[RMDB]
RNA sequence: GGGAACGACUCGAGUAGAGUCGAAAACGCAGCCAGUCGGAAGAAGAAUAAAACUGCCUCGAGGCAGCGCACAGACUGGUUGGAUCGCUCGACGAUCAUGGCAGCAUCAGCGACCAAAGCAAUCCGUGUAUAACUUAACAUUCGUGUUAAGUUAUACAAAAGAAACAACAACAACAAC
Reactivity to 2A3 in 0.01 (KOAc 150mM, MgCl2 10mM, bicine 150mM(pH8.5), 24C), signal-to-noise 9, nucleotides 027 to 126: c060g000c010a000g000c000c000a000g010u020c030g070g040a090a050g050a080a020g080a180a100u210a170a100a030a030c000u000g000c010c020u170c170g080a300g010g000c000a000g000c020g030c020a090c020a070g010a000c000u000g000g000u000u020g000g010a020u020c010g010c040u100c120g120a150c020g020a070u050c030a040u090g080g000c050a030g000c010a070u050c020a030g010c010g030a040c020c010a070a040a010g020c020a020a070u030c020c020g030u020
Reactivity to DMS in 0.01 (KOAc 150mM, MgCl2 10mM, bicine 150mM(pH8.5), 24C), signal-to-noise 9, nucleotides 027 to 126: c110g010c010a180g000c010c010a010g000u010c000g010g020a120a120g010a130a110g020a130a120u020a070a080a110a160c010u000g010c000c000u030c280g020a210g010g010c000a000g010c070g000c150a080c070a140g000a010c010u000g000g000u010u000g000g000a050u000c020g000c030u020c140g010a070c050g010a050u000c050a080u010g010g010c120a050g010c060a080u010c050a040g000c020g010a080c020c020a030a090a070g010c090a070a080u010c020c030g010u010